The record gives the reactivity of an RNA of 177 nucleotides to DMS and 2A3. The DMS profile rests on 3,529 reads. The reactions ran in a buffer of 150 mM KOAc, 10 mM MgCl2 and 150 mM bicine (pH 8.5), at 24 C. DMS adducts were read by reverse transcription with MarathonRT. The 2A3 profile rests on 2,579 reads.

RNA sequence: GGGAACGACUCGAGUAGAGUCGAAAAUUGAAUUUGCGAUUGAUGUCUGAGUCGGAAAAAGUGUCUUAUUACACACUCCGUCUUAUGACUGAGAGUAAAUCGAAUAACAGUGAUAAAGAUUUUUGUAGACACUGAUGAAUUUCGAUUCAUCAGUGUCAAAAGAAACAACAACAACAAC
Reactivity to DMS in 0.01 (KOAc 150mM, MgCl2 10mM, bicine 150mM(pH8.5), 24C), signal-to-noise 3, nucleotides 027 to 126: u030u010g000a070a030u000u000u000g000c030g020a050u020u030g000a060u060g000u000c010u000g000a050g000u010c000g000g000a030a080a080a100a070g020u000g000u000c270u020u080a130u030u020a020c060a000c000a050c140u010c000c020g030u000c010u000u000a020u020g010a000c000u000g000a170g030a130g010u010a090a020a010u000c000g000a110a110u040a180a140c120a130g040u000g010a080u060a110a040a110g000a160u000u030u000u020u010g020u020a160
Reactivity to 2A3 in 0.01 (KOAc 150mM, MgCl2 10mM, bicine 150mM(pH8.5), 24C), signal-to-noise 4, nucleotides 027 to 126: u030u050g090a020a020u050u020u040g060c020g090a060u030u100g050a050u100g000u000c000u000g000a000g000u010c000g000g070a100a160a030a040a060g010u020g010u030c040u100u210a250u170u250a080c030a000c000a020c080u000c010c000g010u000c000u010u080a190u230g010a000c000u050g020a020g000a000g030u030a010a000a020u010c030g050a040a000u150a090a060c120a110g120u020g250a200u150a190a100a030g040a120u020u020u000u080u080g060u030a020